[RMDB]
RNA sequence: GGGAACGACUCGAGUAGAGUCGAAAAGAAAGAAAGAAAGAAGUGCAUUCGUACCCUUAUCAUUCUCGCGCCCCGUGUGCAUUAAAAGACAACUGGACGGAGAACUGAUAAGGGCUCGUAUCACCAAAGUCUGCCCUUAGUUCGCUAAGGGCAGACUAAAAGAAACAACAACAACAAC
Reactivity to 2A3 in 0.01 (KOAc 150mM, MgCl2 10mM, bicine 150mM(pH8.5), 24C), signal-to-noise 1, nucleotides 027 to 126: g100a000a050a000g030a020a140a000g100a060a160a000g150a070a000g000u000g040c030a050u030u050c000g000u100a040c000c000c000u000u000a000u000c000a000u000u020c000u000c010g300c010g000c000c000c000c080g020u130g000u000g050c050a070u000u230a160a000a030a030g110a100c030a070a060c010u000g010g030a000c020g000g000a000g000a000a000c070u010g000a000u000a000a000g000g020g000c000u000c040g000u000a000u050c020a000c000c030a060a060